[RMDB]
RNA sequence: GGGAACGACUCGAGUAGAGUCGAAAAACAAAUAUGUGUUCCCCAAGCGUGCUGGCAUUGCACCAUUUUUCCAAUUGACCGUGGCCAGCAUGACGUUCUUCUAUCUGAUCAACUACUCCAAGUUGAACCAUUAUUCAUAUUUCGAUAUGAAUAAUGGAAAAGAAACAACAACAACAAC
Reactivity to 2A3 in 0.01 (KOAc 150mM, MgCl2 10mM, bicine 150mM(pH8.5), 24C), signal-to-noise 9, nucleotides 027 to 126: a000c060a020a130a020u300a090u200g120u020g010u030u020c000c000c000c010a100a040g040c010g010u000g000c000u010g000g000c020a060u040u270g040c040a040c020c010a040u070u060u030u080u030c050c060a080a080u070u100g060a100c040c060g030u050g070g060c000c000a000g000c000a000u010g020a010c030g050u050u030c000u090u010c020u060a170u040c040u060g050a080u040c010a010a020c010u090a050c040u040c090c030a080a010g000u010u010g020a030a040
Reactivity to DMS in 0.01 (KOAc 150mM, MgCl2 10mM, bicine 150mM(pH8.5), 24C), signal-to-noise 9, nucleotides 027 to 126: a050c070a070a090a100u030a070u010g020u020g010u000u000c010c010c010c280a110a110g010c030g030u000g000c010u000g010g010c030a090u010u020g010c070a070c060c040a030u000u000u000u000u010c120c110a090a080u010u020g010a100c150c090g000u010g000g010c000c010a020g010c010a010u000g000a150c040g000u000u000c020u000u000c110u010a090u010c080u000g010a120u000c020a020a020c010u000a090c150u020c150c130a060a050g010u000u000g010a040a300